[RMDB]
RNA sequence: GGGAACGACUCGAGUAGAGUCGAAAAGUAACUGAAUCCACUGGGUCACUUACUAAAAACACCAAUUCACACUUAUUCCCAGAUGCGUUGAAUCAGAAUCUUUGAGUGGUGGGGCCAGGAGUUUGUAUACUGGACCCACGUUCGCGUGGGUCCAGUAAAAAGAAACAACAACAACAAC
Reactivity to DMS in 0.01 (KOAc 150mM, MgCl2 10mM, bicine 150mM(pH8.5), 24C), signal-to-noise 1, nucleotides 027 to 126: g000u000a010a120c030u000g000a060a080u000c000c030a140c110u020g020g000g040u000c030a020c080u000u000a030c000u000a030a070a070a110a070c170a070c070c030a040a060u000u000c030a090c030a080c050u000u000a190u000u010c010c020c000a100g000a050u000g020c060g020u000u000g020a040a020u000c040a110g010a060a120u000c050u000u000u000g010a080g020u010g010g010u000g020g010g000g020c020c050a040g000g020a060g000u000u000u000g000u000a130